[RMDB]
Chemical mapping of a 207-nucleotide RNA with 2A3 and DMS. 2A3 adducts were read by reverse transcription with SuperScript II with manganese. For DMS the reverse transcriptase was MarathonRT. The DMS profile rests on 2,604 reads. The reactions ran in a buffer of 150 mM KOAc, 10 mM MgCl2 and 150 mM bicine (pH 8.5), at 24 C. Source: RMDB library OK3TST, as collected in RNAgym.
RNA sequence: GGGAACGACUCGAGUAGAGUCGAAAAGCAGCCUCCUAAGGAAGGGGCUGCCAAUCUGUAGUUGGCAGAUGCUAUAGGAAUUGCUUACAAAUGUCGUCUUUAAGAAAAAUGUUCUUAUAUUUUUCCUAUGGGCAAAAUGAAGGCUUGGGUGCUCAUAACUGCAGUAUUAGUUCGCUAAUACUGCAGUAAAAGAAACAACAACAACAAC
Reactivity to 2A3 in 0.01 (KOAc 150mM, MgCl2 10mM, bicine 150mM(pH8.5), 24C), signal-to-noise 3, nucleotides 027 to 156: g010c020a020g000c000c010u040c010c010u120a080a060g170g060a110a090g000g000g000g000c010u010g000c000c000a010a040u010c020u070g060u080a060g050u060u050g020g000c010a010g020a090u020g020c030u020a040u040a040g010g020a060a060u100u060g000c010u140u110a090c070a110a130a120u130g050u100c040g040u000c030u060u130u080a060a040g000a050a040a030a060a100u130g020u090u020c020u150u120a080u040a050u220u070u020u000u000c000c010u020a020u050g060g000g000c000a040a070a060a080u070g030a080a020g000g000c020u040u060g030g010g010u060g020c030u030c100a050u160a190
Reactivity to DMS in 0.01 (KOAc 150mM, MgCl2 10mM, bicine 150mM(pH8.5), 24C), signal-to-noise 1, nucleotides 027 to 156: g030c000a010g000c000c020u000c030c000u000a130a210g020g050a220a100g020g030g010g020c000u010g010c000c030a050a060u010c020u000g050u000a060g030u000u000g020g010c060a080g020a110u010g000c040u000a080u000a110g030g000a080a050u000u000g010c030u010u060a210c080a050a080a090u000g020u000c120g010u000c030u000u000u000a020a070g000a020a040a010a030a000u000g020u000u000c160u010u010a100u000a040u010u000u000u000u000c000c020u000a020u020g000g020g030c000a030a000a050a100u000g010a070a140g020g000c000u000u010g020g010g030u000g010c000u020c040a120u000a130